The record gives the reactivity of an RNA of 177 nucleotides to 2A3 and DMS. For DMS, 2,314 sequencing reads were counted.
[RMDB]
RNA sequence: GGGAACGACUCGAGUAGAGUCGAAAACUCAGCGGUCGCUCGGAAUCGGUCACCUCGAUCACCGUUGGGUGGUCCUGACCGCCCAGCUGGCGCUGCGCGUCGAACACCUUGCGGAUGCUGUCGGGGGUCCAAACGACUACUUCGGUAGUCGUUUGGAAAAAGAAACAACAACAACAAC
Reactivity to 2A3 in 0.01 (KOAc 150mM, MgCl2 10mM, bicine 150mM(pH8.5), 24C), signal-to-noise 4, nucleotides 027 to 126: c020u000c020a020g030c040g080g060u060c060g010c040u010c020g030g080a090a140u110c050g010g030u050c020a090c060c020u010c020g040a040u060c000a010c030c000g020u090u080g040g000g010u010g000g010u100c040c030u030g050a030c010c100g000c000c060c000a010g000c020u210g120g030c100g000c060u030g000c000g020c030g000u060c000g020a030a020c010a030c010c010u040u040g020c020g070g090a170u050g010c070u040g040u040c020g020g000g000g000g000
Reactivity to DMS in 0.01 (KOAc 150mM, MgCl2 10mM, bicine 150mM(pH8.5), 24C), signal-to-noise 2, nucleotides 027 to 126: c020u000c030a090g010c080g030g030u010c100g000c040u000c080g000g030a110a050u000c030g000g000u010c030a060c100c060u000c080g000a000u010c060a020c000c020g000u010u030g000g030g030u000g020g040u020c040c190u060g040a010c050c030g030c070c020c000a030g010c050u020g000g020c210g070c000u020g000c300g000c040g000u040c000g000a080a070c010a070c010c000u010u000g000c000g000g040a090u000g000c170u020g000u000c010g000g000g000g000g000

The RNA was probed in 150 mM KOAc, 10 mM MgCl2 and 150 mM bicine (pH 8.5) at 24 C. DMS adducts were read by reverse transcription with MarathonRT. For 2A3 the reverse transcriptase was SuperScript II with manganese.